[RMDB]
RNA sequence: GGGAACGACUCGAGUAGAGUCGAAAAAGUCAGAGGGCGCUACCAUGCAAACUAGGGCUGGCUACUCUGGCACAGAAUCACAUCUCGAUAAUUGUCAGUGCAAGAAGGACAAUUAUACCAUUUAAUGAAAACGUUUACCUGUUCGCAGGUAAACGAAGAUCGCUCUAGUGUUCGCACUAGAGCGAUCAAAAGAAACAACAACAACAAC
Reactivity to 2A3 in 0.01 (KOAc 150mM, MgCl2 10mM, bicine 150mM(pH8.5), 24C), signal-to-noise 2, nucleotides 027 to 156: a000g000u000c000a000g020a020g050g020g000c040g000c120u060a090c050c000a080u160g040c090a100a130a110c150u180a130g010g160g000c110u040g050g000c030u150a230c000u020c000u000g000g030c000a000c000a030g110a080a100u170c050a050c010a160u080c020u070c100g000a010u060a040a000u010u000g000u000c010a040g080u060g300c050a190a000g150a080a060g180g000a020c000a000a000u020u020a020u020a020c020c020a080u130u180u170a110a190u150g110a000a130a000a000c000g000u000u000u000a000c000c000u000g040u040u090c130g010c020a000g020g000u000a000a000a000c000g000a010a000

Chemical mapping of a 207-nucleotide RNA with 2A3. Values cover nucleotides 27 to 156. The reactions ran in a buffer of 150 mM KOAc, 10 mM MgCl2 and 150 mM bicine (pH 8.5), at 24 C. The data come from the RNA Mapping Database (RMDB), library M2RFOK.